An RNA of 177 nucleotides, treated with DMS and 2A3 and read out base by base. 2A3 is a SHAPE reagent: it acylates the 2'-hydroxyl of flexible nucleotides of all four kinds. It was measured as part of the RMDB library M2PK50.
[RMDB]
RNA sequence: GGGAACGACUCGAGUAGAGUCGAAAACUUGCAAGGUUCGCCUUGCAAGAAAUAAAAGCUCACCAUCCAACAAAAAUAAGAGCAUGGAUGGAAAAAGAAUAAAAACAGCAGUGUUCGCACUGCUGAACUUUUGUACUUUGUUCGCAAAGUACAAAAGAAAAGAAACAACAACAACAAC
Reactivity to DMS in 0.01 (KOAc 150mM, MgCl2 10mM, bicine 150mM(pH8.5), 24C), signal-to-noise 1, nucleotides 027 to 126: c000u000u010g000c050a020a000g010g000u000u010c230g010c000c000u050u000g010c000a000a050g000a040a070a050u000a080a030a160a110g030c070u000c010a170c000c010a000u000c000c000a040a150c060a010a140a160a100a210u010a030a140g000a030g000c130a040u000g000g010a020u010g010g020a050a050a070a180a040g010a150a090u010a060a030a030a130a160c010a010g020c000a000g010u010g010u000u000c150g020c010a010c020u010g000c010u010g000a010a050
Reactivity to 2A3 in 0.01 (KOAc 150mM, MgCl2 10mM, bicine 150mM(pH8.5), 24C), signal-to-noise 2, nucleotides 027 to 126: c000u010u000g000c010a000a000g040g000u050u080c160g070c050c000u000u010g000c000a000a000g000a000a030a010u020a000a070a010a030g020c010u030c010a050c000c000a000u000c000c000a040a030c000a030a300a130a120a070u240a250a080g030a020g110c130a090u010g020g000a000u030g010g000a090a000a040a070a000g070a020a030u110a080a080a030a010a020c000a010g000c000a020g000u000g070u110u090c140g000c050a010c030u010g000c000u000g000a000a010
For 2A3 the reverse transcriptase was SuperScript II with manganese.